[RMDB]
An RNA of 207 nucleotides, treated with 2A3 and DMS and read out base by base.
RNA sequence: GGGAACGACUCGAGUAGAGUCGAAAAAUCAUCAUCAUCAUGGUGAUUACAAGGAUGACGACGAUAAGGAAAACCUCUAUUUUCAGGGUAGUGCGCAAAUCGAUCAGAAAGCUCACGUACCGCACUUUUCUAAGCUACAACCUUUUGUAGCCGUAAGCCGUACGUUUAACUUCGGUUAAACGUACGGAAAAGAAACAACAACAACAAC
Reactivity to 2A3 in 0.01 (KOAc 150mM, MgCl2 10mM, bicine 150mM(pH8.5), 24C), signal-to-noise 4, nucleotides 027 to 156: a000u020c010a010u000c000a000u000c010a020u030c030a040u020g000g010u000g020a010u050u040a060c080a080a080g080g010a120u100g020a020c090g010a010c040g020a050u060a170a070g100g000a020a010a010a080c010c030u040c030u100a200u130u200u040u130c060a020g040g000g030u020a020g020u040g010c040g000c030a010a030a190u090c040g060a100u100c020a040g110a070a110a030g020c030u030c040a070c060g100u050a020c020c000g030c020a040c030u060u040u080u000c020u070a080a010g000c000u000a010c010a060a090c040c020u150u210u130u030g000u000a000g000c020c000g070u020a060a000g010
Reactivity to DMS in 0.01 (KOAc 150mM, MgCl2 10mM, bicine 150mM(pH8.5), 24C), signal-to-noise 1, nucleotides 027 to 156: a080u000c000a050u000c000a000u000c080a130u000c090a140u000g040g060u000g010a180u000u000a070c090a100a080g000g000a050u010g010a080c020g010a030c000g000a080u010a060a050g020g000a090a040a080a020c000c010u000c030u010a150u000u000u020u000c000a030g000g010g000u000a040g020u000g060c050g070c070a050a100a130u000c110g010a200u010c130a130g000a110a030a140g000c060u000c060a040c090g000u000a090c100c000g060c020a010c000u000u000u010u000c040u000a090a010g020c010u000a010c000a010a070c290c110u020u000u020u020g030u000a010g010c000c010g010u000a040a120g000

The 2A3 profile rests on 1,927 reads. It was measured as part of the RMDB library PDB130. Values cover nucleotides 27 to 156. High DMS reactivity at an A or C suggests that its Watson-Crick edge is free. The DMS profile rests on 2,067 reads.